[RMDB]
RNA sequence: GGGAACGACUCGAGUAGAGUCGAAAACCCCAGCCAGGGAUUUUCAUCCUCGAGCUUCUUAAUUUUCUUCUUGGCCUUCCGGAGCUCCCUCUCGAGUUCCUCCGCCCUUUUUCUUCCAGACACCCACGACCUCGUCUCUUCGGAGACGAGAAAAGAAACAACAACAACAAC
Reactivity to DMS in 0.01 (KOAc 150mM, MgCl2 10mM, bicine 150mM(pH8.5), 24C), signal-to-noise 3, nucleotides 027 to 129: c030c000c000c230a030g050c030c050a160g010g000g000a000u000u040u070u000c070a130u020c040c030u010c100g070a040g040c120u080u010c060u090u140a090a140u050u010u030u010c030u030u010c030u040u030g080g010c070c060u020u050c060c050g030g010a090g030c000u020c030c030c060u000c010u030c030g040a110g090u000u000c040c070u010c010c020g030c020c040c020u000u000u000u000u000c000u030u010c040c070a090g000a110c130a070c020c020c000a040c160g030a080c130
Reactivity to 2A3 in 0.01 (KOAc 150mM, MgCl2 10mM, bicine 150mM(pH8.5), 24C), signal-to-noise 4, nucleotides 027 to 129: c020c000c000c000a000g030c010c030a030g020g000g040a050u060u070u060u240c090a020u020c000c000u020c050g050a050g000c020u070u060c030u120u260a240a220u040u010u020u020c060u100u020c020u020u040g060g000c000c010u030u040c030c020g020g000a010g010c030u040c000c010c000u050c000u020c020g040a030g000u030u040c000c020u010c000c000g050c000c000c010u020u050u020u010u030c010u030u000c010c010a020g050a050c020a100c020c010c000a040c080g040a040c010